The data come from the RNA Mapping Database (RMDB), library ARCHII. Chemical mapping of a 207-nucleotide RNA with 2A3. Values are in units of 0.01, from 0 to 300, in steps of 10.
[RMDB]
RNA sequence: GGGAACGACUCGAGUAGAGUCGAAAAAGAGCUCUCGUCUGUUGCAAGAUAUAAGUUGCUGAGCAUGUUAUGUUGGAAAGAUAACAUGCUGGAGUAAUAAUGAAUUGCGGAACGCCUUAGGCUGGAAACAGAGCAGGGUUAGCAAUCGCUUGUAUACGCUGAGAAAGUCGUUCGCGACUUUCUCAGCAAAAGAAACAACAACAACAAC
Reactivity to 2A3 in 0.01 (KOAc 150mM, MgCl2 10mM, bicine 150mM(pH8.5), 24C), signal-to-noise 2, nucleotides 027 to 156: a000g060a010g020c010u000c000u020c040g080u020c080u050g140u050u070g000c030a010a020g040a020u080a040u080a170a050g020u010u010g010c000u010g020a000g000c000a000u000g000u010u000a030u010g160u150u080g060g060a080a070a020g050a090u000a020a000c000a000u000g000c010u000g000g020a030g000u000a000a060u030a020a070u160g100a060a090u020u010g000c050g020g080a040a030c080g130c040c000u040u080a030g080g000c020u020g010g060a040a060a060c020a060g020a010g080c050a060g010g040g000u110u180a040g010c010a010a020u050c020g000c030u000u000g010u000a070u010a090c060

About this RNA: 2A3 adducts were read by reverse transcription with SuperScript II with manganese.